[RMDB]
RNA sequence: GGGAACGACUCGAGUAGAGUCGAAAAAUUUUUUCCCUGCCUGUCUGUCGCGCUCUCUGCACCCUCCGAUCUCUCUCUUCUAUCGCAUGCGCAGGAGCGGAUACCCACUUGUACGUCUUCCUCCCGGGUCCGUGGUAAGCUUCGGCUUACCACGGACAAAAGAAACAACAACAACAAC
Reactivity to 2A3 in 0.01 (KOAc 150mM, MgCl2 10mM, bicine 150mM(pH8.5), 24C), signal-to-noise 1, nucleotides 027 to 126: a000u160u170u010u000u010u010c010c030c020u000g010c010c000u030g000u160c000u020g020u030c020g030c000g030c060u000c000u000c000u010g040c010a100c040c050c090u050c000c050g070a110u060c030u000c000u010c000u000c030u110u000c010u030a130u060c050g010c120a030u070g010c050g020c040a000g000g020a010g000c060g010g000a090u100a050c000c000c020a010c030u000u060g030u060a040c040g020u010c000u030u030c000c000u000c000c100c000g070g080